[RMDB]
RNA sequence: GGGAACGACUCGAGUAGAGUCGAAAAAGGUAUUGUGAGCACGCAAACGAAGAUGAACGGCUGCACUAAAGCAAGACAGUGCAUUGCCUACAAGCUCGACCAAACGAAAUGGGUCUUCAACUCGCCGCAUAUGGAACAAAUUCGUUUGUUCCAUAUGAAAAGAAACAACAACAACAAC
Reactivity to 2A3 in 0.01 (KOAc 150mM, MgCl2 10mM, bicine 150mM(pH8.5), 24C), signal-to-noise 9, nucleotides 027 to 126: a000g170g020u150a110u120u160g040u040g040a020g020c020a020c100g070c050a100a060a040c080g060a030a030g040a080u090g030a080a020c050g010g000c010u010g000c000a010c010u130a170a050a040g090c050a050a040g110a070c060a020g010u000g000c010a020u030u230g000c000c000u020a020c030a030a030g010c010u010c020g020a030c020c000a050a070a040c060g070a030a050a080u080g020g000g000u010c000u020u030c010a050a060c020u030c040g070c030c010g030
Reactivity to DMS in 0.01 (KOAc 150mM, MgCl2 10mM, bicine 150mM(pH8.5), 24C), signal-to-noise 9, nucleotides 027 to 126: a070g010g010u000a060u000u000g010u000g010a050g020c030a120c140g010c130a060a080a110c120g010a060a050g020a070u010g000a170a120c210g010g010c020u000g010c010a020c020u000a060a070a110g010c190a090a100g000a090c170a020g010u000g000c010a030u010u010g010c010c000u000a100c100a100a090g000c030u000c020g000a080c030c030a030a080a110c120g000a050a080a090u010g000g000g000u000c020u000u000c030a060a080c110u000c080g020c090c110g010